RNA sequence: GGGAACGACUCGAGUAGAGUCGAAAAGAUAUGGAGCCUGCGAAGUCGUCAUCGAAGAACUCGGAAACGAGGGAGAUGCGAUGGAGGCUCCUAAGUCAAAAGACGCCUGUGUUCGCACAGGCGUCAACGAACGAUUUAUGUUCGCAUAAAUCGUUCGAAAAGAAACAACAACAACAAC
Reactivity to 2A3 in 0.01 (KOAc 150mM, MgCl2 10mM, bicine 150mM(pH8.5), 24C), signal-to-noise 1, nucleotides 027 to 126: g040a010u110a040u170g050g000a010g020c040c040u260g300c110g040a020a020g000u000c010g100u110c030a000u020c010g130a300a070g000a070a020c000u010c020g000g050a080a050a050c000g000a010g000g000g020a020g000a010u010g000c000g000a020u020g000g020a010g000g010c000u000c000c000u010a000a010g000u010c010a060a090a090a180g000a000c010g020c010c000u000g000u010g070u040u140c300g090c080a000c000a000g000g080c020g010u000c000a010a000
Reactivity to DMS in 0.01 (KOAc 150mM, MgCl2 10mM, bicine 150mM(pH8.5), 24C), signal-to-noise 2, nucleotides 027 to 126: g000a100u000a300u000g000g030a000g020c000c010u010g000c160g020a240a190g000u000c010g000u010c010a010u010c000g000a110a130g020a160a180c000u010c010g020g000a140a090a140c000g000a010g000g000g010a110g000a020u000g000c010g000a020u000g000g000a000g020g020c000u000c000c020u000a000a060g000u000c020a140a080a190a150g010a010c000g000c000c000u000g060u000g000u000u020c290g000c010a020c020a000g000g000c000g010u020c010a000a060
Description: An RNA of 177 nucleotides, treated with 2A3 and DMS and read out base by base. Source: RMDB library TTRDEL, as collected in RNAgym. For 2A3, 1,796 sequencing reads were counted. DMS adducts were read by reverse transcription with MarathonRT.